Chemical mapping of a 207-nucleotide RNA with 2A3. The 2A3 profile rests on 1,559 reads. The data come from the RNA Mapping Database (RMDB), library M2RFPK. Conditions: 150 mM KOAc, 10 mM MgCl2 and 150 mM bicine (pH 8.5), 24 C. For 2A3 the reverse transcriptase was SuperScript II with manganese.

RNA sequence: GGGAACGACUCGAGUAGAGUCGAAAAACGGUCGUACGCGACCGAGGCGCGGCUAUGUCGACGGACCGAACAAUGGCAUCCCGCAUUCUGCCAUCCGCCGCGCAGCUUCUUCUCAAACGGUGCGGAAAAAAGUAGGACACCUUCGGGUGUCCUACAACCACGGAUUUAUGUUCGCAUAAAUCCGUGGAAAAGAAACAACAACAACAAC
Reactivity to 2A3 in 0.01 (KOAc 150mM, MgCl2 10mM, bicine 150mM(pH8.5), 24C), signal-to-noise 2, nucleotides 027 to 156: a000c010g000g000u000c000g030u040a060c300g010c010g130a010c010c000g000a050g020g000c000g000c010g000g020c010u050a060u180g020u010c030g010a200c160g200g040a020c060c020g020a030a020c050a070a020u010g000g000c000a020u150c070c010c010g000c000a010u300u050c020u030g010c000c000a010u010c010c060g000c000c000g030c000g000c010a010g000c030u140u110c010u040u030c030u030c040a060a050a040c080g010g000u000g020c010g000g000a000a000a000a000a000a140g000u000a000g000g000a000c000a000c000c000u060u090c250g020g000g000u000g000u000c000c000u000a000c000a000a000